RNA sequence: GGGAACGACUCGAGUAGAGUCGAAAAGAUAUGGAAUAAUAUGGGAGCUGCUUCGGAAACGAAAACAGCGAAGAACAUAUAUUCCUAAGUCAAAACAUACCAACACGCUUCGGCGUGUUGGUAUGAAGAUUACUUCUAGGUUCGCCUAGAAGUAAUCAAAAGAAACAACAACAACAAC
Reactivity to 2A3 in 0.01 (KOAc 150mM, MgCl2 10mM, bicine 150mM(pH8.5), 24C), signal-to-noise 4, nucleotides 027 to 126: g020a010u050a030u110g000g040a030a000u160a290a040u020a060u040g030g020g110a050g010c000u020g000c010u020u010c010g010g020a050a040a030c000g000a020a040a010a050c010a000g010c050g060a110a030g060a060a000c000a010u030a010u000a010u020u000c000c000u020a080a010g040u000c020a020a030a080a130c000a010u010a000c000c000a000a000c010a000c000g040c000u100u130c300g190g000c000g000u000g010u000u000g000g000u010a000u000g000a000a000
Reactivity to DMS in 0.01 (KOAc 150mM, MgCl2 10mM, bicine 150mM(pH8.5), 24C), signal-to-noise 4, nucleotides 027 to 126: g000a030u000a290u000g000g000a010a000u000a060a080u000a000u010g000g000g020a160g010c010u010g010c130u010u000c000g000g000a060a070a080c000g000a010a020a060a170c010a010g010c000g010a070a140g000a140a130c000a000u000a010u010a030u000u000c000c000u010a030a100g010u000c020a050a080a110a190c000a000u000a000c010c000a010a020c000a010c010g010c000u000u010c230g020g010c000g020u000g000u000u000g000g010u000a000u000g000a050a090
Structure probing data (2A3 and DMS) for a 177-nucleotide construct. The reactions ran in a buffer of 150 mM KOAc, 10 mM MgCl2 and 150 mM bicine (pH 8.5), at 24 C. 2A3 adducts were read by reverse transcription with SuperScript II with manganese. For 2A3, 11,676 sequencing reads were counted.